[RMDB]
RNA sequence: GGGAACGACUCGAGUAGAGUCGAAAACUCUGUGCUUCCAUGAUAUGAGUGAAUGCAUAGAAAUUGCAGAGGAAUCCAAAGGACUGUGCUUCACCUAUGGCUCAGUGUUAUUUUAUACCUGUGACAUGGAACCUUAUCCGUUCGCGGAUAAGGUUCCAAAAGAAACAACAACAACAAC
Reactivity to 2A3 in 0.01 (KOAc 150mM, MgCl2 10mM, bicine 150mM(pH8.5), 24C), signal-to-noise 1, nucleotides 027 to 126: c000u000c040u030g000u000g000c240u000u070c000c000a000u150g020a140u170a060u190g070a180g070u090g050a030a000u300g000c000a030u000a010g040a000a050a000u050u040g000c060a000g000a030g110g130a200a240u110c050c000a020a020a020g060g000a000c030u040g000u010g000c000u060u000c030a030c030c000u030a070u050g000g000c000u000c020a000g000u000g000u110u030a250u000u160u010u000a150u030a070c000c010u070g000u000g060a000c060a040u020

Structure probing data (2A3) for a 177-nucleotide construct.
2A3 adducts were read by reverse transcription with SuperScript II with manganese.
The reactions ran in a buffer of 150 mM KOAc, 10 mM MgCl2 and 150 mM bicine (pH 8.5), at 24 C.